An RNA of 177 nucleotides, treated with DMS and read out base by base. Values cover nucleotides 27 to 126. The RNA was probed in 150 mM KOAc, 10 mM MgCl2 and 150 mM bicine (pH 8.5) at 24 C. For DMS, 1,471 sequencing reads were counted.
RNA sequence: GGGAACGACUCGAGUAGAGUCGAAAAGAAUGGACAUGCUUUGGUCUGGAAUUUGCUAGGGUGAGAGUGUCAGUGGCAGGUUCAGGGCAGCCUCAGGCUUGGUGGGGUCCACACAGCCCUGGAAGGACGCCAAUGUCCUGUUCGCAGGACAUUGGCGAAAAGAAACAACAACAACAAC
Reactivity to DMS in 0.01 (KOAc 150mM, MgCl2 10mM, bicine 150mM(pH8.5), 24C), signal-to-noise 1, nucleotides 027 to 126: g010a110a100u000g000g000a110c050a070u000g010c040u000u010u020g000g000u020c030u010g020g000a130a090u010u000u010g020c040u000a060g020g000g010u030g020a080g020a080g030u010g030u010c090a070g020u000g000g010c060a040g010g000u000u010c030a060g000g010g020c060a170g010c040c010u000c040a050g000g010c040u010u000g000g030u000g000g000g010g000u000c030c070a100c150a050c230a110g000c020c000c000u010g020g000a130a070g040g000a150